[RMDB]
RNA sequence: GGGAACGACUCGAGUAGAGUCGAAAAGUAAAGCGCGAGGGCUGGUGAGGAUUUGGAGGCGUGAGAGAGAUUGUAGGGAUCCUGCCUCCUCCCUCUCCGCGCGGCGCCUCCAAGCCGAUAUAAAAAAUGGCUACCUAAUAUUCGUAUUAGGUAGCCAAAAAGAAACAACAACAACAAC
Reactivity to DMS in 0.01 (KOAc 150mM, MgCl2 10mM, bicine 150mM(pH8.5), 24C), signal-to-noise 1, nucleotides 027 to 126: g010u010a050a140a160g010c030g000c030g000a130g030g000g000c040u010g010g000u020g000a060g020g020a020u000u030u000g010g000a050g000g000c000g030u010g030a090g000a050g000a080g000a070u010u020g020u020a100g020g010g000a080u020c040c040u010g000c000c000u000c010c010u000c070c030c000u020c010u000c010c030g020c090g000c090g000g000c040g020c030c000u000c020c030a060a040g000c010c020g000a070u010a060u010a020a050a060a080a050a090